The data come from the RNA Mapping Database (RMDB), library 15KLIB. The record gives the reactivity of an RNA of 170 nucleotides to 2A3 and DMS. For DMS, 14,081 sequencing reads were counted. Conditions: 150 mM KOAc, 10 mM MgCl2 and 150 mM bicine (pH 8.5), 24 C. DMS adducts were read by reverse transcription with MarathonRT. For 2A3, 12,551 sequencing reads were counted. 2A3 adducts were read by reverse transcription with SuperScript II with manganese.
[RMDB]
RNA sequence: GGGAACGACUCGAGUAGAGUCGAAAACUGGAGAAGGGAGACUCGGGAACGCCUAGCAUCUGAGGGACAAAGCCGCCCCCGGGCGCUCCCCUCGGAGAUCCACUGGGUGGGUUCACAUCCCCAACCCUACCGUUGUGCUUCGGCACAACGAAAAGAAACAACAACAACAAC
Reactivity to 2A3 in 0.01 (KOAc 150mM, MgCl2 10mM, bicine 150mM(pH8.5), 24C), signal-to-noise 6, nucleotides 027 to 129: c030u060g070g030a050g020a070a060g010g000g010a070g020a030c010u010c030g020g000g020a010a000c020g020c020c000u030a030g030c020a090u030c020u020g000a030g020g040g010a020c040a060a080a000g050c110c060g010c010c020c010c010c020g030g000g000c050g000c000u020c000c000c000c000u000c010g000g000a010g000a060u090c050c020a030c070u020g030g000g000u040g010g060g000u090u100c070a030c010a170u080c000c000c000c000a000a100c020c000c020u060a080c020
Reactivity to DMS in 0.01 (KOAc 150mM, MgCl2 10mM, bicine 150mM(pH8.5), 24C), signal-to-noise 7, nucleotides 027 to 129: c120u020g030g010a030g040a140a120g050g010g000a050g020a130c110u020c050g040g010g020a080a080c110g000c070c040u020a030g030c230a090u020c030u030g070a090g000g000g000a000c080a110a140a080g000c150c070g040c050c030c020c140c190g000g000g000c030g010c060u000c060c000c020c000u040c020g000g000a030g020a060u020c060c140a140c070u010g010g010g040u010g010g040g020u000u010c120a110c160a210u040c060c010c010c020a040a120c070c010c020u070a100c090